[RMDB]
Chemical mapping of a 207-nucleotide RNA with DMS and 2A3. The RNA was probed in 150 mM KOAc, 10 mM MgCl2 and 150 mM bicine (pH 8.5) at 24 C. For 2A3, 858 sequencing reads were counted. DMS adducts were read by reverse transcription with MarathonRT. 2A3 adducts were read by reverse transcription with SuperScript II with manganese.
RNA sequence: GGGAACGACUCGAGUAGAGUCGAAAAGGCACUGUUACCCCCAAAUACGUCAGAACAAGGACAGUUUCCUUAUUGACUCAGCACCAGCCGCAUUUCGGGAAACAUCACAUCAGUAACAAGAUCUGUUGCUGUGCUAAGAGCAGGUGUAGGGCGUGUACACGAGCAAAAUGUUCGCAUUUUGCUCGUGAAAAGAAACAACAACAACAAC
Reactivity to DMS in 0.01 (KOAc 150mM, MgCl2 10mM, bicine 150mM(pH8.5), 24C), signal-to-noise 1, nucleotides 027 to 156: g000g000c250a060c000u010g030u000u000a120c020c000c020c040c020a000a070a060u000a090c080g010u000c020a010g000a090a060c150a070a140g010g010a060c080a210g020u000u020u000c030c010u000u000a190u000u000g000a140c020u000c010a090g030c050a050c050c010a070g000c040c060g000c020a110u020u000u010c060g010g000g020a130a180a020c040a040u000c070a110c040a080u000c050a080g000u000a070a120c040a030a140g010a050u000c060u000g000u000u000g010c030u000g050u000g020c030u000a050a070g000a080g050c020a040g000g000u000g020u010a090g000g020g040c000g010u000g040u000a090
Reactivity to 2A3 in 0.01 (KOAc 150mM, MgCl2 10mM, bicine 150mM(pH8.5), 24C), signal-to-noise 2, nucleotides 027 to 156: g010g020c040a010c070u110g160u150u300a270c070c040c000c000c030a070a160a010u170a040c060g040u060c050a040g020a060a020c080a170a090g000g000a030c060a190g030u080u070u120c040c000u120u060a150u130u140g050a050c000u000c030a000g000c020a040c080c110a040g030c000c010g000c060a030u000u050u060c030g050g000g040a010a040a010c020a010u170c000a010c000a200u170c040a080g040u130a070a010c000a040a000g000a070u000c040u040g000u020u000g000c000u000g000u000g000c000u080a150a000g000a000g050c020a020g040g000u060g000u040a050g010g070g000c010g000u010g000u010a020